[RMDB]
Conditions: 150 mM KOAc, 10 mM MgCl2 and 150 mM bicine (pH 8.5), 24 C. Chemical mapping of a 170-nucleotide RNA with DMS and 2A3. It was measured as part of the RMDB library 15KLIB. Reactivities are given for positions 27 through 129. DMS adducts were read by reverse transcription with MarathonRT.

RNA sequence: GGGAACGACUCGAGUAGAGUCGAAAAACGUUGAUAAGGAUUUACUCCGAGGAGACGAACUACCACGAACAGGGGUAACUCUACCCGUGGCGUCUCCGUUUGACGAGUAAGUCCUAAGUCAACAUGCACACUUAGCUCUUCGGAGCUAAGAAAAGAAACAACAACAACAAC
Reactivity to DMS in 0.01 (KOAc 150mM, MgCl2 10mM, bicine 150mM(pH8.5), 24C), signal-to-noise 4, nucleotides 027 to 129: a040c150g010u040u010g000a020u020a100a000g030g000a040u000u000u000a000c010u020c000c030g000a070g000g050a000g030a020c000g030a030a070c140u100a300c010c000a050c030g050a090a300c170a100g000g020g020g040u000a040a050c000u020c030u020a130c180c050c000g010u000g010g010c000g050u010c010u000c000c020g020u030u000u020g010a130c300g010a040g000u000a020a000g000u000c000c000u010a020a060g010u000c000a020a000c010a080u070g040c080a090c200a100
Reactivity to 2A3 in 0.01 (KOAc 150mM, MgCl2 10mM, bicine 150mM(pH8.5), 24C), signal-to-noise 5, nucleotides 027 to 129: a000c090g000u000u000g000a020u010a080a000g000g000a000u010u000u000a000c000u000c010c020g010a050g010g020a010g010a000c000g010a050a040c100u180a070c080c010a000c010g040a130a020c050a130g030g020g000g020u070a110a080c030u010c030u070a060c010c030c020g000u000g000g000c000g000u000c000u000c010c000g000u040u040u080g030a020c000g000a000g000u010a000a010g000u000c000c000u000a000a010g020u000c000a000a000c000a020u110g020c040a050c000a010